[RMDB]
RNA sequence: GGGAACGACUCGAGUAGAGUCGAAAAGAAGGCCAUCACACAGUUGAAACAAUGAUACAUUUGGGUAUAUUCAAGAGGACCAAAGGCAAGAGUUACACAGUGGAAUAUUGCCAGGCUAAAGUACUGGGCAUGAGUCAUGAUUCGUCAUGACUCAUGCAAAAGAAACAACAACAACAAC
Reactivity to 2A3 in 0.01 (KOAc 150mM, MgCl2 10mM, bicine 150mM(pH8.5), 24C), signal-to-noise 2, nucleotides 027 to 126: g030a050a040g050g000c020c000a050u060c000a000c000a010c000a060g040u080u060g130a070a070a020c040a060a090u140g060a050u140a150c040a210u060u070u120g040g050g070u050a080u020a010u120u110c040a050a020g030a040g090g080a050c020c000a060a010a010g010g010c090a050a010g040a010g090u040u010a010c050a000c000a010g060u090g020g120a080a080u130a090u070u100g010c020c010a000g010g020c010u090a110a130a000g080u020a120c020u010g000g120
Reactivity to DMS in 0.01 (KOAc 150mM, MgCl2 10mM, bicine 150mM(pH8.5), 24C), signal-to-noise 2, nucleotides 027 to 126: g020a180a140g020g010c010c000a120u010c070a070c070a050c090a050g030u000u010g000a130a130a060c090a080a050u000g000a100u000a070c020a170u000u010u020g010g010g010u000a080u000a060u000u000c100a020a110g010a140g000g000a080c020c050a040a060a070g000g010c050a020a080g000a120g000u000u000a040c080a030c050a020g000u000g010g010a060a040u000a030u000u000g020c020c010a070g010g010c060u020a040a070a050g010u010a020c040u000g000g010
The record gives the reactivity of an RNA of 177 nucleotides to 2A3 and DMS. For DMS the reverse transcriptase was MarathonRT.